[RMDB]
RNA sequence: GGGAACGACUCGAGUAGAGUCGAAAAGAGUGUUCACCCGGGUGGAGGCAACUCAGAUUACACCGCAUCCCUAGACGAGAACAUCUCCAUCUUAACCACAAUAGCUAGCGACUUAUUGAAUGACAUCUCGAUUAGUGCGAUUCGUCGCACUAAUCGAAAAAGAAACAACAACAACAAC
Reactivity to 2A3 in 0.01 (KOAc 150mM, MgCl2 10mM, bicine 150mM(pH8.5), 24C), signal-to-noise 5, nucleotides 027 to 126: g050a010g040u040g050u050u050c020a100c010c000c020g020g010g020u050g050g030a030g010g040c020a060a060c030u010c020a030g020a100u080u110a050c060a030c040c030g040c050a080u070c000c000c000u050a060g040a080c060g020a020g010a080a060c010a100u020c000u000c030c000a030u040c030u060u110a000a060c010c010a040c040a070a100u040a110g030c050u010a010g040c030g150a090c020u070u110a070u080u140g080a080a070u130g020a040c040a150u050c040
Reactivity to DMS in 0.01 (KOAc 150mM, MgCl2 10mM, bicine 150mM(pH8.5), 24C), signal-to-noise 2, nucleotides 027 to 126: g030a000g010u000g020u010u010c000a080c000c000c050g000g040g070u010g000g000a030g000g010c120a030a110c110u000c040a130g000a200u000u020a090c080a050c000c000g000c110a080u000c000c000c000u000a060g000a070c090g000a010g070a030a130c100a130u040c020u000c020c040a050u000c040u000u040a130a120c220c070a080c130a100a010u020a070g020c000u000a030g000c050g000a150c030u030u040a100u000u010g000a070a070u030g000a060c140a120u000c120
Chemical mapping of a 177-nucleotide RNA with 2A3 and DMS.
The 2A3 profile rests on 3,205 reads.
The RNA was probed in 150 mM KOAc, 10 mM MgCl2 and 150 mM bicine (pH 8.5) at 24 C.
Source: RMDB library OK1LIB, as collected in RNAgym.
DMS adducts were read by reverse transcription with MarathonRT.